RNA sequence: GGGAACGACUCGAGUAGAGUCGAAAAGUGGAAGCCGGAGCCAGAUCAGGCAGCUUGCGGCGAUGCGCGGUCUCAUGGCGAAGCCGUCGGGAGAGAUCAUCGAGCUGCCCAUCAGGGCGAACUUCAACAACAGGUGCAUCUUCGGAUGCACCUGUUGAAAAGAAACAACAACAACAAC
Reactivity to DMS in 0.01 (KOAc 150mM, MgCl2 10mM, bicine 150mM(pH8.5), 24C), signal-to-noise 1, nucleotides 027 to 126: g000u000g000g040a080a150g000c060c060g000g040a200g000c030c020a050g000a040u000c220a030g020g000c000a090g000c010u000u000g060c100g020g000c060g000a070u000g030c040g020c050g000g070u020c000u000c000a060u000g000g050c020g020a050a160g040c160c040g010u000c090g020g030g000a050g010a020g010a050u010c020a130u010c170g020a130g010c000u000g020c040c030c040a080u000c060a050g020g030g020c020g010a080a040c080u000u000c050a090a060